[RMDB]
RNA sequence: GGGAACGACUCGAGUAGAGUCGAAAAGAUAUGGAUGUAUCCACGGUGAUUGAUGACCUCGGAAACGAGCAAGAUCCCGUGGAGUACAUCCUAAGUCAAAAGAACUGUGAGUUCGCUCACAGUUCAAGUAGAAACGCUAGUUCGCUAGCGUUUCUACAAAAGAAACAACAACAACAAC
Reactivity to DMS in 0.01 (KOAc 150mM, MgCl2 10mM, bicine 150mM(pH8.5), 24C), signal-to-noise 3, nucleotides 027 to 126: g010a050u010a300u010g010g000a020u000g030u000a020u010c000c000a010c010g010g000u010g010a000u000u010g010a080u000g010a070c300c010u000c000g020g000a160a100a120c000g010a020g010c030a060a130g000a010u000c010c000c010g020u000g000g010a010g010u000a000c010a010u000c010c000u000a020a050g010u020c050a080a080a140a120g000a020a010c000u000g020u000g000a040g010u010u010c190g020c000u010c000a000c000a000g000u000u000c000a010a060
Reactivity to 2A3 in 0.01 (KOAc 150mM, MgCl2 10mM, bicine 150mM(pH8.5), 24C), signal-to-noise 2, nucleotides 027 to 126: g010a020u080a060u220g000g000a010u000g000u010a010u000c000c000a000c000g000g100u300g030a010u000u070g120a180u100g070a150c010c010u010c010g020g050a030a080a070c000g000a000g000c020a090a140g000a010u000c020c010c000g000u010g010g000a000g010u010a000c000a000u000c000c000u000a020a010g030u000c030a090a000a010a150g000a000a010c000u010g010u000g030a030g010u080u180c300g000c090u020c000a020c010a000g000u000u000c000a000a000

The data come from the RNA Mapping Database (RMDB), library TTRDEL. This 177-nucleotide RNA was probed chemically with DMS and 2A3. For 2A3, 4,610 sequencing reads were counted. For DMS the reverse transcriptase was MarathonRT.